[RMDB]
RNA sequence: GGGAACGACUCGAGUAGAGUCGAAAAUGCCCAUUCGUGGGCAAUCAACCGUAGGGAGGAACUACAACUUAAGUAGGCGAAGAACAUGCGUUCGAAAGAGCGCAUGGGAGCCUACGGAGGUUGCCUCCCUAAACGGCAUAAUGAUGUUCGCAUCAAAGAUAUGCAAGCAUUUCGAUGCUUGCAUAUCAAAAGAAACAACAACAACAAC
Reactivity to DMS in 0.01 (KOAc 150mM, MgCl2 10mM, bicine 150mM(pH8.5), 24C), signal-to-noise 1, nucleotides 027 to 156: u000g000c030c000c010a090u000u000c200g020u000g000g000g070c000a070a040u000c000a070a010c010c000g040u000a040g000g000g010a020g000g010a080a180c030u000a300c000a000a060c030u000u000a110a200g000u000a060g000g000c000g000a090a190g050a050a150c000a000u000g000c000g060u000u010c020g000a110a090a240g010a010g050c000g000c000a020u020g000g010g000a300g030c000c010u000a000c000g030g040a090g000g000u000u030g010c000c000u000c020c000c000u000a000a030a030c010g010g050c020a110u010a170a070u010g010a040u000g020u000u000c110g000c010a090u000c110a100a120a200
Reactivity to 2A3 in 0.01 (KOAc 150mM, MgCl2 10mM, bicine 150mM(pH8.5), 24C), signal-to-noise 2, nucleotides 027 to 156: u120g020c040c010c000a030u070u110c170g040u010g000g000g000c030a010a090u100c050a030a150c030c000g020u020a010g000g000g020a010g030g020a030a030c020u250a090c240a010a030c000u050u060a060a000g010u000a000g020g000c040g110a170a000g010a070a020c000a020u010g010c000g010u010u000c000g020a010a040a010g000a000g010c010g000c000a000u000g000g000g000a000g010c000c000u000a000c010g000g000a010g010g000u020u000g000c000c000u000c000c000c000u010a020a010a000c000g010g000c010a010u200a260a100u240g050a010u010g070u130u080c220g060c130a050u200c080a110a060a020